[RMDB]
RNA sequence: GGGAACGACUCGAGUAGAGUCGAAAAGAUCGGAAUCAGCAGCAGGUGAGUCCGCCUUAUGUGAAGGAUCGGCUGAAACACGAGGAAAUACUGAGCCAACGCAAGACGGUAGCCGAACAGUAGCAACAAAACGCUUACGUGUUCGCACGUAAGCGAACAGCUACCGAAUCUUCGGAUUCGGUAGCUGAAAAGAAACAACAACAACAAC
Reactivity to 2A3 in 0.01 (KOAc 150mM, MgCl2 10mM, bicine 150mM(pH8.5), 24C), signal-to-noise 1, nucleotides 027 to 156: g010a050u040c030g000g010a170a000u000c040a000g100c000a000g110c000a000g000g010u110g010a040g010u050c020c010g040c000c030u140u080a260u270g070u010g120a100a020g000g000a010u020c020g050g000c070u040g030a120a050a050c080a050c040g040a070g000g080a010a000a070u260a140c090u090g010a000g070c000c000a020a000c010g000c070a040a000g070a010c150g000g000u040a010g070c010c000g120a000a000c000a100g100u080a000g040c050a030a070c050a150a060a000a000c010g020c000u000u000a000c000g060u060g040u060u050c040g000c050a000c140g000u000a000a000g000c020g010a000a000
This 207-nucleotide RNA was probed chemically with 2A3. The data come from the RNA Mapping Database (RMDB), library M2RFPK. The 2A3 profile rests on 479 reads. The RNA was probed in 150 mM KOAc, 10 mM MgCl2 and 150 mM bicine (pH 8.5) at 24 C.